[RMDB]
RNA sequence: GGGAACGACUCGAGUAGAGUCGAAAAUCCGAGAAUUCCUUUGAUGUUUCCCAGCCAGGGAUUCUCAUCCUCGAGCUUCUUGAUUUUCUUCUUUGUCCUCCGGAGAUCCCUCUCGAGUUCGUCUAACUUCUUUCUUCCGUCCACCCACUCCUGGAGAGAUGCUUAUGUACUUCGGUACAUAAGCAUCAAAAGAAACAACAACAACAAC
Reactivity to 2A3 in 0.01 (KOAc 150mM, MgCl2 10mM, bicine 150mM(pH8.5), 24C), signal-to-noise 2, nucleotides 027 to 156: u030c000c000g000a010g010a020a060u040u080c000c020u050u110u290g070a100u140g110u050u170u020c010c020c030a020g110c040c060a030g000g000g000a000u040u050c020u010c010a010u050c000c060u050c080g080a040g050c040u150u080c000u030u240g070a130u190u070u110u060c050u090u050c000u300u170u160g060u060c000c000u030c000c030g020g020a040g030a070u060c040c040c000u090c010u000c030g040a010g050u000u010c030g030u030c040u000a050a070c060u110u000c000u020u090u050c010u050u000c040c000g060u070c050c040a090c040c020c000a000c060u060c000c040u100g020g020a100g010a010
Record summary
Source: RMDB library VIROID, as collected in RNAgym. An RNA of 207 nucleotides, treated with 2A3 and read out base by base. For 2A3 the reverse transcriptase was SuperScript II with manganese. For 2A3, 694 sequencing reads were counted. The reactions ran in a buffer of 150 mM KOAc, 10 mM MgCl2 and 150 mM bicine (pH 8.5), at 24 C.